This 177-nucleotide RNA was probed chemically with 2A3 and DMS. For DMS the reverse transcriptase was MarathonRT. Reactivities are given for positions 27 through 126.

RNA sequence: GGGAACGACUCGAGUAGAGUCGAAAAGGGUGCCGGUAUGUUAGCGAACACGCCACCGAACUUACCAAUGGGGGUCCUAACAGCACUCACAAUAUAGACGCUCUUCUCGUCUAUCAAGGCCUAGCCCCACUAAUGCCGCGUUCGCGCGGCAUUAGUGAAAAGAAACAACAACAACAAC
Reactivity to 2A3 in 0.01 (KOAc 150mM, MgCl2 10mM, bicine 150mM(pH8.5), 24C), signal-to-noise 2, nucleotides 027 to 126: g060g000g000u060g030c030c020g110g050u130a070u040g090u050u050a020g090c130g080a060a040c110a050c150g090c000c000a080c020c060g040a080a070c080u170u170a080c040c030a070a150u100g000g000g000g000g000u040c000c000u020a030a000c000a000g020c060a010c060u060c000a040c040a070a020u100a000u010a070g030a030c020g030c050u010c040u290u000c070u090c040g050u000c020u000a100u030c040a110a000g110g000c010c010u020a010g020c010c000c000
Reactivity to DMS in 0.01 (KOAc 150mM, MgCl2 10mM, bicine 150mM(pH8.5), 24C), signal-to-noise 1, nucleotides 027 to 126: g060g070g000u000g000c040c180g080g090u010a090u000g000u000u000a090g000c010g000a010a000c100a110c130g000c140c000a000c040c000g000a060a000c140u000u030a060c150c130a080a190u000g050g000g060g000g000u000c040c110u000a000a000c020a070g000c120a080c000u000c080a060c250a190a100u000a030u000a000g000a010c000g000c200u090c040u040u000c050u040c040g050u000c000u000a050u000c200a040a060g140g060c000c000u000a060g000c140c000c040
It was measured as part of the RMDB library OK1LIB.
For DMS, 959 sequencing reads were counted.